[RMDB]
This 207-nucleotide RNA was probed chemically with 2A3. Source: RMDB library M2RFPK, as collected in RNAgym. The reactions ran in a buffer of 150 mM KOAc, 10 mM MgCl2 and 150 mM bicine (pH 8.5), at 24 C.
RNA sequence: GGGAACGACUCGAGUAGAGUCGAAAACGUGUCCGUCGGCGUAGCCGACAACAUGCCCAGGUAGCCCAGACCUUCAAGGCUACGGUGCGUUGCGAGGCACGGUCUGAUUCUUCACAACGACGUUCACAAGAUCGGAUCACUUUCGAGUGAUCCGAAACGUCUCCUCAUAGUUCGCUAUGAGGAGACGAAAAGAAACAACAACAACAAC
Reactivity to 2A3 in 0.01 (KOAc 150mM, MgCl2 10mM, bicine 150mM(pH8.5), 24C), signal-to-noise 2, nucleotides 027 to 156: c010g000u000g000u000c030c070g000u050c070g020g000c160g110u230a080g040c020c010g020a010c000a020a020c020a070u090g030c000c010c000a010g020g070u010a020g010c010c080c100a030g030a150c040c070u090u100c130a080a060g000g000c000u010a010c020g000g000u070g000c090g020u050u110g110c030g110a160g000g010c000a000c030g000g000u000c050u070g010a020u040u010c040u110u080c060a070c040a200a070c040g060a010c030g030u040u050c060a080c040a230a040g070a130u040c000g010g000a000u010c010a010c000u010u050u150c220g050a010g020u000g000a000u000c010c000g000a000a010a000